[RMDB]
RNA sequence: GGGAACGACUCGAGUAGAGUCGAAAAAGUCAGAGGGCGCUACCAUGCAAACUAGGGCUGGCUACUCUUGCACAGCAUCACAUCUCGAUAAUUGUCAGUGCAAGAAGGACAAUUAUACCAUUUAAUGAAAACGUUUACCUGUUCGCAGGUAAACGAAGGCUACAAAUGACUUCGGUCAUUUGUAGCCAAAAGAAACAACAACAACAAC
Reactivity to 2A3 in 0.01 (KOAc 150mM, MgCl2 10mM, bicine 150mM(pH8.5), 24C), signal-to-noise 1, nucleotides 027 to 156: a010g000u000c010a000g020a010g040g000g040c000g000c020u100a260c090c050a110u240g020c000a000a020a030c010u060a030g000g020g040c000u020g000g030c030u050a080c000u010c000u000u000g010c040a000c000a000g070c000a040u190c060a070c010a140u080c050u130c180g120a030u030a010a010u010u000g000u000c000a000g020u000g030c010a000a000g000a000a010g070g000a000c000a000a030u040u000a060u050a150c060c080a090u110u230u240a130a160u250g140a050a000a000a000c000g010u000u030u000a000c000c000u000g020u050u050c140g000c090a000g000g000u000a000a000a000c000g000a000a020